The data come from the RNA Mapping Database (RMDB), library M2RFPK.
The record gives the reactivity of an RNA of 207 nucleotides to 2A3.
The RNA was probed in 150 mM KOAc, 10 mM MgCl2 and 150 mM bicine (pH 8.5) at 24 C.

[RMDB]
RNA sequence: GGGAACGACUCGAGUAGAGUCGAAAAGAUCUGCGCCGAUCCGAAACGCUAGCAAACAGCCCGCAUCAUGUCGUCUCCUAACUUCGACGUGGUGAAAUACUGAGCUUAUGCGAGUAAGCCUGUUCGCAAUAGAUCAGAACGUUCGCGUUCUGAUCAACUCGAGACGUUGAUUCGUCAACGUCUCGAGAAAAGAAACAACAACAACAAC
Reactivity to 2A3 in 0.01 (KOAc 150mM, MgCl2 10mM, bicine 150mM(pH8.5), 24C), signal-to-noise 2, nucleotides 027 to 156: g030a040u010c000u050g000c000g010c030c030g040a020u000c000c010g000a030a070a020c090g000c120u110a010g000c060a080a010a110c030a050g000c020c040c050g030c000a050u000c000a000u000g000u000c000g020u000c100u110c080c110u140a120a110c080u090u060c000g020a020c000g010u020g000g010u040g020a010a010a000u160a040c010u030g050a040g030c010u030u030a030u110g060c050g000a030g050u010a020a020g020c030c040u070g010u000u040c050g000c070a080a070u070a190g000a000u000c010a000g000a000a000c000g010u070u070c160g000c020g100u000u050c000u000g000a000u000c010a000a000
The 2A3 profile rests on 882 reads.